This 207-nucleotide RNA was probed chemically with 2A3 and DMS. The RNA was probed in 150 mM KOAc, 10 mM MgCl2 and 150 mM bicine (pH 8.5) at 24 C. Source: RMDB library M2RFPK, as collected in RNAgym. The DMS profile rests on 3,244 reads.
[RMDB]
RNA sequence: GGGAACGACUCGAGUAGAGUCGAAAACGCAGAGGGUUCUGAUAACCAAGAACCUAGAUAGCCGCAUCGGUAUUAUAGGAUGUAGUCGGUGAGCCGGAAUGCCUGCAUCGUAAGCCUAUAAGUAAAUUUAAGUGUAAUCACUUCGGUGAUUACACAACUUUAAUUCCAUCUUCGGAUGGAAUUAAAGAAAAGAAACAACAACAACAAC
Reactivity to 2A3 in 0.01 (KOAc 150mM, MgCl2 10mM, bicine 150mM(pH8.5), 24C), signal-to-noise 4, nucleotides 027 to 156: c090g010c050a030g040a110g110g000g000u000u000c030u040g110a180u120a190a080c050c000a070a010g010a000a010c000c000u030a040g030a100u090a010g060c060c020g050c080a100u110c080g100g000u100a060u210u050a050u100a030g040g000a030u050g060u120a030g060u080c020g000g010u040g020a030g040c050c000g040g060a120a030u100g020c000c010u040g010c020a010u020c010g040u040a040a030g020c000c010u050a050u020a100a070g090u100a030a080a200u130u210u130a170a020g000u000g000u000a000a000u000c000a000c000u010u040c110g080g000u010g010a010u000u000a000c000a000c000a000a000
Reactivity to DMS in 0.01 (KOAc 150mM, MgCl2 10mM, bicine 150mM(pH8.5), 24C), signal-to-noise 2, nucleotides 027 to 156: c050g000c030a140g000a190g010g020g030u010u000c030u000g010a180u010a120a210c150c090a160a090g000a060a100c010c010u000a060g020a200u000a140g050c000c060g030c080a100u000c050g040g020u000a050u000u000a040u000a090g030g010a060u000g020u000a120g060u000c030g020g000u000g000a060g030c040c000g020g000a040a140u000g010c040c010u000g000c030a010u010c020g000u000a050a160g010c020c010u000a070u020a030a100g000u020a030a100a120u000u000u000a150a100g010u010g020u000a010a010u000c000a010c000u000u000c300g040g020u000g010a040u000u000a010c000a000c000a010a040